RNA sequence: GGGAACGACUCGAGUAGAGUCGAAAACAGGUCACUCCGAAUGACCAUGCUAAUGCCAGAGCUUUUUCGCAUCUGGCUAGUAAACUGAUCGAACAUGAGAUCCCCACCUCAGUUACGAUCUUGGACAGCUCACCAUUAUGUUCGCAUAAUGGUGAGCAAAAGAAACAACAACAACAAC
Reactivity to 2A3 in 0.01 (KOAc 150mM, MgCl2 10mM, bicine 150mM(pH8.5), 24C), signal-to-noise 7, nucleotides 027 to 126: c080a030g000g000u010c010a010c040u100c070c090g040a080a090u050g000a010c000c000a010u040g000c000u040a110a050u140g000c000c000a000g000a000g010c010u150u140u050u120u220c080g010c070a300u030c000u000g000g000c000u000a000g000u000a000a130a050c080u050g010a000u000c000g010a020a000c130a300u040g000a000g010a020u020c010c000c000c010a090c010c000u010c000a010g010u010u040a180c000g000a010u000c000u030u110g050g010a020c030a040
Reactivity to DMS in 0.01 (KOAc 150mM, MgCl2 10mM, bicine 150mM(pH8.5), 24C), signal-to-noise 3, nucleotides 027 to 126: c160a080g010g000u000c000a000c070u030c140c080g010a190a200u020g000a020c000c010a250u020g000c020u000a040a060u020g010c000c000a000g000a000g020c000u020u040u020u070u070c200g020c000a140u000c000u000g000g000c000u000a000g000u000a060a090a140c180u000g020a000u000c010g020a040a020c060a090u000g000a010g000a040u010c020c000c000c030a100c290c000u000c000a040g000u000u010a090c000g010a000u000c010u030u020g010g000a120c300a170